An RNA of 177 nucleotides, treated with DMS and 2A3 and read out base by base. The reactions ran in a buffer of 150 mM KOAc, 10 mM MgCl2 and 150 mM bicine (pH 8.5), at 24 C. As a SHAPE reagent, 2A3 marks flexible, mostly unpaired nucleotides at the ribose 2'-OH. For 2A3 the reverse transcriptase was SuperScript II with manganese. For DMS the reverse transcriptase was MarathonRT.
[RMDB]
RNA sequence: GGGAACGACUCGAGUAGAGUCGAAAAAAAAACGAUGAUCCAGUUGUAGCGGUGAUUAUCGUAGCUAUCAGCUGGAUCAUCAAUCGGUGGCGACACCGAACGAUAACCGCACACAUGCUGAAAAAAACAUGAAAUGCUAGUUCGCUAGCAUUUCAUGAAAAGAAACAACAACAACAAC
Reactivity to DMS in 0.01 (KOAc 150mM, MgCl2 10mM, bicine 150mM(pH8.5), 24C), signal-to-noise 2, nucleotides 027 to 126: a020a030a010a030a050c140g030a010u000g030a000u000c000c010a030g010u000u020g020u000a010g010c030g020g000u010g000a240u030u020a120u000c050g030u000a190g000c020u000a010u010c040a010g010c000u000g000g000a020u000c010a020u000c000a080a030u000c020g020g010u000g000g000c300g000a220c010a010c000c010g010a000a030c220g010a070u050a100a100c040c030g010c050a040c090a050c140a050u000g000c080u000g000a000a000a040a000a060a070a100
Reactivity to 2A3 in 0.01 (KOAc 150mM, MgCl2 10mM, bicine 150mM(pH8.5), 24C), signal-to-noise 2, nucleotides 027 to 126: a000a000a000a000a010c080g010a020u020g020a010u000c000c000a010g010u010u000g010u000a000g000c020g000g070u120g110a180u020u290a130u300c020g000u030a030g000c000u010a010u210c010a000g000c000u000g000g010a000u000c000a000u000c000a000a000u010c010g010g000u000g010g040c020g000a020c000a010c000c000g000a030a000c000g010a030u110a100a140c080c000g000c010a020c000a000c020a120u130g070c040u090g010a070a030a030a010a000a000a010